[RMDB]
RNA sequence: GGGAACGACUCGAGUAGAGUCGAAAAGACCAGGUGGCGCGCCUCUUUGUUGCCAUGUUGGUCGAUUGUCCACGCCGCCUUUUCGCACAGCAGCCUUGCCUGGUCGAUUUCGUUGCGGGACUGAGCAGGUCCAGUUUGUGUUCGCACAAACUGGACCAAAAGAAACAACAACAACAAC
Reactivity to 2A3 in 0.01 (KOAc 150mM, MgCl2 10mM, bicine 150mM(pH8.5), 24C), signal-to-noise 2, nucleotides 027 to 126: g020a000c000c000a030g050g010u050g010g000c030g000c030g000c000c000u080c110u080u200u270g140u000u300g060c000c000a020u160g160u180u010g060g000u050c000g000a050u050u090g000u000c000c010a060c120g040c050c020g000c000c010u040u050u000u030c050g000c010a110c030a050g030c000a030g010c010c090u160u090g020c010c000u080g020g070u060c000g020a020u000u050u070c080g020u050u030g010c010g000g000g020a000c020u000g010a040g070c050a050